The record gives the reactivity of an RNA of 177 nucleotides to DMS.
For DMS, 1,667 sequencing reads were counted.

RNA sequence: GGGAACGACUCGAGUAGAGUCGAAAAUCCUCCCUCUUCGUCCUUCUUCUUUCUCAACAUUCCGACGAUGUUUCCCAGCCAGGGGUUUUCAUCCUCAAGUUUCUUGAUCUUCUUGUUGAUUCGCCGGCAAAUGCUCUUAGUUCGCUAAGAGCAUUUGAAAAGAAACAACAACAACAAC
Reactivity to DMS in 0.01 (KOAc 150mM, MgCl2 10mM, bicine 150mM(pH8.5), 24C), signal-to-noise 1, nucleotides 027 to 126: u010c010c010u000c040c020c000u010c020u000u000c010g030u010c040c010u010u000c000u000u010c020u020u000u010c020u010c040a060a100c090a110u000u000c050c020g010a060c060g010a080u000g010u000u000u000c020c020c020a150g020c110c090a110g020g020g010g010u010u010u020u000c040a080u010c030c020u000c090a090a110g000u000u000u010c020u010u000g010a050u020c050u000u000c040u000u000g000u000u010g010a140u000u000c030g000c080c070g030g000